[RMDB]
RNA sequence: GGGAACGACUCGAGUAGAGUCGAAAACUGGGGCGGUACGCGCUCGAAAAGAUAUCGAGCGCGCCCUAUGGUCAUCUCAGCCGGGACAGAGACCCGGCGAAGAGUGCAAGAGCAAAAGAUGACUUGACAGUGUUCUUCCCAACGAGGAACGCUGACGCAAAUAGGUCAACUUCGGUUGACCUAUUUGAAAAGAAACAACAACAACAAC
Reactivity to 2A3 in 0.01 (KOAc 150mM, MgCl2 10mM, bicine 150mM(pH8.5), 24C), signal-to-noise 2, nucleotides 027 to 156: c030u030g000g000g000g010c040g010g110u150a040c070g000c010g000c000u000c000g010a050a090a010a030g180a080u240a040u110c000g000a000g000c020g010c000g000c010c000c000u020a080u090g000g000u010c010a010u050c010u010c060a010g000c000c000g050g000g000a110c060a110g110a030g040a220c010c000c000g000g000c000g000a010a000g030a010g030u080g020c040a150a060g010a010g110c000a000a050a000a080g000a000u010g000a000c000u050u080g020a020c020a020g000u000g000u040u010c020u010u030c000c050c010a010a070c150g010a000g000g010a000a000c010g010c010u010g000a030c070g000
Reactivity to DMS in 0.01 (KOAc 150mM, MgCl2 10mM, bicine 150mM(pH8.5), 24C), signal-to-noise 1, nucleotides 027 to 156: c050u000g010g000g000g060c050g030g050u000a040c000g010c020g030c030u000c010g000a050a080a130a300g010a230u000a060u010c010g000a030g030c000g000c000g040c020c030c020u020a080u000g030g030u000c000a070u010c000u000c070a170g020c010c010g020g000g010a210c000a270g000a300g000a060c010c000c000g020g020c000g000a070a060g000a160g020u000g020c080a180a120g000a270g050c000a060a130a090a030g000a040u000g020a010c020u000u000g010a140c030a020g020u000g000u020u000c000u020u000c000c070c260a140a270c190g020a020g010g010a020a010c030g000c010u000g020a110c090g000